[RMDB]
RNA sequence: GGGAACGACUCGAGUAGAGUCGAAAACGCCCCUCUGGCACCGACCGCUCCGUCGAAGGGGCAGUGCAGCAACGGCACGGAGUCGCCCCUCGCCAUGCUGUUGCCGGUGGCCUCGAUGCCGACGCUCGCACGUGGUUACGUUCGCGUGACCACGUGCAAAAGAAACAACAACAACAAC
Reactivity to DMS in 0.01 (KOAc 150mM, MgCl2 10mM, bicine 150mM(pH8.5), 24C), signal-to-noise 2, nucleotides 027 to 126: c180g000c020c000c010c020u040c060u000g000g010c050a020c010c020g000a060c080c080g020c020u010c080c010g020u040c150g010a200a090g000g020g000g020c020a070g000u040g000c010a300g050c000a030a070c040g010g000c000a020c030g000g000a120g000u000c060g020c050c000c010c030u010c050g040c040c020a050u000g030c050u000g000u000u020g000c000c050g020g040u040g010g000c000c020u010c010g000a110u020g020c090c000g000a060c120g020c120u000c030
Reactivity to 2A3 in 0.01 (KOAc 150mM, MgCl2 10mM, bicine 150mM(pH8.5), 24C), signal-to-noise 5, nucleotides 027 to 126: c090g040c000c010c000c000u030c020u030g050g000c020a030c040c030g050a040c000c050g030c040u030c030c020g090u100c050g080a100a030g020g000g000g010c000a010g010u080g040c020a030g020c010a020a060c010g030g000c000a010c030g010g020a030g020u070c060g050c000c000c000c010u000c020g000c010c000a030u070g000c020u060g010u030u020g010c000c030g080g020u030g040g000c000c000u020c010g050a080u120g010c010c020g030a050c040g020c060u080c070
The record gives the reactivity of an RNA of 177 nucleotides to DMS and 2A3. The data come from the RNA Mapping Database (RMDB), library OK1LIB. The reactions ran in a buffer of 150 mM KOAc, 10 mM MgCl2 and 150 mM bicine (pH 8.5), at 24 C. 2A3 adducts were read by reverse transcription with SuperScript II with manganese. For DMS, 3,695 sequencing reads were counted.